[RMDB]
RNA sequence: GGGAACGACUCGAGUAGAGUCGAAAAUUGAGCGUGACGGUCGCAUCCUCGACGGUGGAGCGCCCCAGAUCGGUGAUCUGCACCAGGGUGGUCCGGCCGUCGGUGGGAUGGGGAACCCGCCGCACCAAAAUUUAUUAUAGUUCGCUAUAAUAAAUUUAAAAGAAACAACAACAACAAC
Reactivity to DMS in 0.01 (KOAc 150mM, MgCl2 10mM, bicine 150mM(pH8.5), 24C), signal-to-noise 6, nucleotides 027 to 126: u020u030g010a130g010c100g000u010g010a120c020g000g000u000c010g040c010a000u000c000c000u010c010g000a000c000g000g020u010g000g000a010g010c010g010c010c000c000c040a050g000a040u010c080g020g020u040g000a050u010c060u010g010c300a090c140c160a180g000g000g010u000g000g000u000c000c000g000g020c000c000g000u000c000g000g010u030g010g000g000a010u000g000g000g010g000a070a090c060c010c000g010c030c000g010c010a050c020c020a090
Reactivity to 2A3 in 0.01 (KOAc 150mM, MgCl2 10mM, bicine 150mM(pH8.5), 24C), signal-to-noise 9, nucleotides 027 to 126: u150u150g040a050g020c040g010u070g110a210c010g010g010u070c040g020c160a000u010c000c010u090c020g000a010c000g000g010u020g010g010a020g030c010g010c000c000c000c000a090g060a210u170c120g120g050u120g040a070u050c050u240g070c040a050c030c050a030g000g020g000u020g020g200u010c010c000g040g030c010c010g000u000c010g000g000u070g030g010g000a000u010g000g030g070g020a020a060c010c010c010g000c010c000g000c010a050c020c010a000